[RMDB]
RNA sequence: GGGAACGACUCGAGUAGAGUCGAAAAGAUGCCGGACAACUCUGCCUCCACAUUAAUUAAUGUGGGACCGCUGGAGGAUGACGCCUCCGCAGAAAACCUUUACAGCCGUGCGGUGGACAAGUUGGGCCAGUCCGUUUGGCUGGUGGACUGGCACCAGUCUAAGUGCAGAAUUCGUUCUGCACUUAGAAAAAGAAACAACAACAACAAC
Reactivity to 2A3 in 0.01 (KOAc 150mM, MgCl2 10mM, bicine 150mM(pH8.5), 24C), signal-to-noise 2, nucleotides 027 to 156: g030a020u070g050c080c010g020g030a080c080a130a130c180u050c010u060g020c000c000u000c020c000a000c000a010u060u150a280a180u190u150a050a030u150g000u010g000g000g040a040c020c040g030c030u100g010g010a000g040g010a020u090g050a020c080g090c020c000u000c000c000g000c000a020g120a020a060a000a010c020c030u090u130u110a050c040a010g010c030c030g140u120g010c020g040g010u030g050g040a050c030a110a060g040u200u030g020g000g010c030c000a000g000u020c000c020g040u030u050u070g070g040c030u050g010g040u050g010g010a010c010u000g000g020c010a020c000c000a000g000
Reactivity to DMS in 0.01 (KOAc 150mM, MgCl2 10mM, bicine 150mM(pH8.5), 24C), signal-to-noise 1, nucleotides 027 to 156: g000a080u000g010c000c000g000g000a130c020a030a070c070u000c040u010g010c050c040u000c000c010a020c000a010u000u000a190a180u020u000a020a000u010g010u000g000g030g020a070c040c110g000c070u000g020g010a050g000g030a130u000g000a120c150g000c030c010u000c010c010g020c040a120g000a090a110a130a110c020c050u000u000u000a080c030a050g030c000c050g040u000g010c070g000g030u010g000g020a050c050a050a220g010u000u010g020g000g000c000c000a070g010u020c010c040g030u000u000u000g010g040c060u020g010g010u010g010g010a020c010u010g000g000c000a030c030c000a070g000